[RMDB]
RNA sequence: GGGAACGACUCGAGUAGAGUCGAAAAAUGCUGAGACGCUUGCCUCCGAGUUAACAGAAAAGAAAAGCACUUUCCAAGAGGAGCUGGACGAAGAACUGAAAAUGAUGGCUGAAUUGAAGCAUAGUCUCUUUGAGAAGAGACAUGGACGAGGAGGAGAACACGUCUUGAAGUUCGCUUCAAGACGUGUAAAAGAAACAACAACAACAAC
Reactivity to DMS in 0.01 (KOAc 150mM, MgCl2 10mM, bicine 150mM(pH8.5), 24C), signal-to-noise 1, nucleotides 027 to 156: a020u000g040c020u020g040a160g060a110c070g030c020u000u000g000c070c000u000c000c000g030a160g000u000u000a060a210c090a100g000a080a050a020a060g010a030a040a140a050g010c000a020c030u000u000u000c040c030a060a070g000a160g070g020a140g020c000u010g000g020a150c100g020a100a090g070a090a160c060u000g000a050a080a050a130u010g000a110u000g030g030c030u000g020a040a090u000u000g020a110a100g000c050a050u010a110g020u000c020u000c000u000u000u000g010a150g000a040a000g000a010g020a030c010a090u000g020g000a060c010g000a220g000g020a190g000g000a170g000a110
Reactivity to 2A3 in 0.01 (KOAc 150mM, MgCl2 10mM, bicine 150mM(pH8.5), 24C), signal-to-noise 2, nucleotides 027 to 156: a000u060g000c010u040g010a000g010a050c050g030c080u050u090g030c000c000u010c030c000g020a030g000u030u020a060a060c080a040g090a090a080a060a000g090a010a070a000a000g040c000a020c030u050u040u070c060c020a090a030g020a030g070g010a030g020c020u020g020g030a020c030g030a040a060g030a080a030c060u080g010a040a000a040a140u090g050a040u060g030g040c030u050g020a060a140u080u030g060a020a020g010c030a040u030a070g010u000c010u000c000u030u040u100g170a180g030a070a000g010a000g000a020c010a020u040g030g020a040c070g010a030g020g010a000g000g000a010g000a020
Structure probing data (DMS and 2A3) for a 207-nucleotide construct. The reactions ran in a buffer of 150 mM KOAc, 10 mM MgCl2 and 150 mM bicine (pH 8.5), at 24 C. It was measured as part of the RMDB library OK3TST. For DMS, 1,953 sequencing reads were counted.